[RMDB]
RNA sequence: GGGAACGACUCGAGUAGAGUCGAAAAGGCUUGACGAUGCUGCUGAUGCUGGCGGUGACACCGAUGGCGUGAGCUGGAGACAGGGUGCUACGUCAUCGUUGUCAUCGUCAUCAUCAUCACCCGAGAAUACGGCACUACUCUUCGGAGUAGUGCCGUAAAAAGAAACAACAACAACAAC
Reactivity to 2A3 in 0.01 (KOAc 150mM, MgCl2 10mM, bicine 150mM(pH8.5), 24C), signal-to-noise 2, nucleotides 027 to 126: g030g040c020u060u110g010a110c120g170a120u180g010c000u010g080c000u000g000a000u000g000c000u000g000g000c000g000g000u000g000a000c000a020c000c000g010a000u000g000g000c010g010u180g090a030g000c000u050g010g160a060g050a170c060a090g050g060g200u260g120c000u000a000c000g000u000c000a000u000c000g000u000u000g000u000c000a000u000c000g000u000c000a000u000c000a000u000c010a000u000c040a020c010c020c050g010a030g090a060a020

An RNA of 177 nucleotides, treated with 2A3 and read out base by base. Source: RMDB library RFM100, as collected in RNAgym. High 2A3 reactivity points to a flexible backbone, as in loops and unpaired stretches.